[RMDB]
RNA sequence: GGGAACGACUCGAGUAGAGUCGAAAACACUACAAUCGAGUUUAUACAAGAAGGAAUGGGGUUAUGUCUCCAGAAGACCGUCUAUACCCUCUUUUCUUUGGAUCCAUAAUGCUACCGAUUUCCAUGUUUUGGUUUGCAUGGACCUGUUACCCAUACAGUAAUAGCUAGUCUUCGGACUAGCUAUUACAAAAGAAACAACAACAACAAC
Reactivity to DMS in 0.01 (KOAc 150mM, MgCl2 10mM, bicine 150mM(pH8.5), 24C), signal-to-noise 2, nucleotides 027 to 156: c100a150c050u000a050c070a090a130u000c000g030a070g030u000u020u000a080u000a180c030a040a210g000a090a070g020g000a110a080u000g010g000g020g020u010u000a060u010g000u000c030u000c080c140a170g020a120a160g010a070c020c100g030u010c150u000a170u000a100c060c000c020u020c050u000u000u000u000c040u000u000u000g000g020a070u020c050c050a090u000a110a070u010g000c030u000a080c040c020g000a080u000u000u000c060c110a090u000g020u000u000u000u010g010g040u000u000u010g000c000a080u000g010g010a010c010c010u030g000u000u000a110c040c010c010a110u010a040c060a190
Reactivity to 2A3 in 0.01 (KOAc 150mM, MgCl2 10mM, bicine 150mM(pH8.5), 24C), signal-to-noise 4, nucleotides 027 to 156: c040a010c030u110a010c050a080a110u020c000g010a010g010u040u070u040a150u070a090c070a060a030g050a030a010g040g030a030a040u080g000g000g000g010u070u040a080u160g030u030c020u030c040c060a020g210a090a000g010a100c020c040g090u040c050u100a050u060a060c010c030c000u070c080u070u020u030u020c050u040u040u060g030g020a090u010c010c010a020u070a160a060u110g010c000u020a040c000c050g070a060u050u060u130c080c120a080u120g130u050u100u030u050g090g010u090u160u120g020c010a020u040g000g010a000c010c000u020g060u020u070a090c000c030c050a020u110a120c050a050